An RNA of 177 nucleotides, treated with 2A3 and DMS and read out base by base. For DMS the reverse transcriptase was MarathonRT. The reactions ran in a buffer of 150 mM KOAc, 10 mM MgCl2 and 150 mM bicine (pH 8.5), at 24 C.
RNA sequence: GGGAACGACUCGAGUAGAGUCGAAAAGAUAUGGAUCCCUGUAGGGAGAACGUCGGAAACGACGGUUCAUCGAUCUACUGGGAUCCUAAGUCAAACUCAAUUGCUACGUUCGCGUAGCAAUUGAGAACACUUGGAAGAGGUUCGCCUCUUCCAAGUGAAAAGAAACAACAACAACAAC
Reactivity to 2A3 in 0.01 (KOAc 150mM, MgCl2 10mM, bicine 150mM(pH8.5), 24C), signal-to-noise 2, nucleotides 027 to 126: g010a010u030a030u110g000g000a010u010c020c000c000u010g000u000a130g020g150g000a040g000a050a000c000g000u000c000g020g030a030a030a040c010g000a010c030g020g080u080u040c030a180u150c010g120a140u080c010u000a000c000u000g010g010g000a000u000c000c000u000a000a020g000u000c020a050a010a110c000u000c000a000a010u010u010g000c000u010a000c000g030u000u100c290g000c000g170u000a000g000c000a000a000u000u000g000a000g010a010a010
Reactivity to DMS in 0.01 (KOAc 150mM, MgCl2 10mM, bicine 150mM(pH8.5), 24C), signal-to-noise 3, nucleotides 027 to 126: g010a030u000a300u010g000g000a010u000c000c000c000u010g000u000a000g000g010g000a160g000a010a010c000g010u010c010g020g000a030a080a130c000g010a000c000g010g020u010u000c040a170u000c070g000a250u010c000u000a000c000u000g000g020g000a010u000c000c010u000a000a030g010u000c020a110a120a190c000u000c000a000a000u000u000g020c000u000a010c000g010u000u000c260g030c020g020u010a000g000c000a000a000u000u000g010a000g000a110a160